[RMDB]
RNA sequence: GGGAACGACUCGAGUAGAGUCGAAAAGAAAGAAAGAAAGAACGGUCGGUGAUGACGUGACCACUGCGCAAUCUGAGUUUUGGAAACCAGAUGAUGGAGUGUGAGCUAAGCACGGACUGAGGCCGAAUGUCUGUGCUCGAUUCGUCGAGCACAGACAAAAAGAAACAACAACAACAAC
Reactivity to 2A3 in 0.01 (KOAc 150mM, MgCl2 10mM, bicine 150mM(pH8.5), 24C), signal-to-noise 2, nucleotides 027 to 126: g100a010a030a000g070a050a060a000g080a010a110a000g130a020a020c030g030g020u000c000g030g060u040g010a140u000g080a000c060g040u030g010a040c000c000a000c000u120g020c040g010c010a010a000u030c000u000g000a050g300u000u030u050u160g210g060a070a030a000c000c000a000g000a000u000g110a160u090g000g000a010g020u000g030u070g000a000g100c140u100a000a050g020c010a000c000g030g160a120c010u040g060a040g030g050c000c010g000a080a040
Reactivity to DMS in 0.01 (KOAc 150mM, MgCl2 10mM, bicine 150mM(pH8.5), 24C), signal-to-noise 2, nucleotides 027 to 126: g100a020a080a010g000a010a080a080g010a010a040a090g000a160a070c030g050g000u000c000g000g060u000g000a030u000g010a090c240g000u000g000a300c300c000a010c000u000g000c030g010c300a160a030u000c010u010g000a150g000u000u070u000u060g000g010a170a080a000c000c000a000g000a000u050g010a150u060g000g020a060g000u000g000u030g050a300g050c030u000a220a010g000c020a000c050g010g000a030c080u010g000a050g000g030c020c000g010a070a120
Structure probing data (2A3 and DMS) for a 177-nucleotide construct. For DMS, 1,375 sequencing reads were counted. DMS adducts were read by reverse transcription with MarathonRT. For 2A3, 1,124 sequencing reads were counted.